[RMDB]
RNA sequence: GGGAACGACUCGAGUAGAGUCGAAAAUGCUGAUGGUGGUAGUAGAAUCAUCGCUUCCCAGGUAAGAAGGGAAAGAUACCCUGCUACUUCCGUAAACAGGCUCUGCGGAUGGUGGUGAGGGUACUUGCAGUUAUCAGGGCCGGUUAACAGAUCGUGCUGUAGUACGGUUGUUCGCAACCGUACUACAAAAAGAAACAACAACAACAAC
Reactivity to 2A3 in 0.01 (KOAc 150mM, MgCl2 10mM, bicine 150mM(pH8.5), 24C), signal-to-noise 1, nucleotides 027 to 156: u050g000c050u120g000a050u070g000g050u010g000g050u030a010g000u000a050g150a170a100u080c060a000u000c000g010c000u030u030c030c000c000a000g030g050u110a150a050g080a040a140g070g000g000a110a000a000g030a020u200a020c000c000c010u000g030c000u010a010c000u030u030c000c020g000u020a000a260a000c000a010g030g030c040u020c000u070g000c050g020g020a100u090g050g060u010g000g000u080g230a050g000g010g000u000a010c000u000u100g000c000a030g020u090u000a170u190c020a020g000g010g000c000c000g050g000u040u060a100a030c040a050g060a080u010c040g050u150g100c040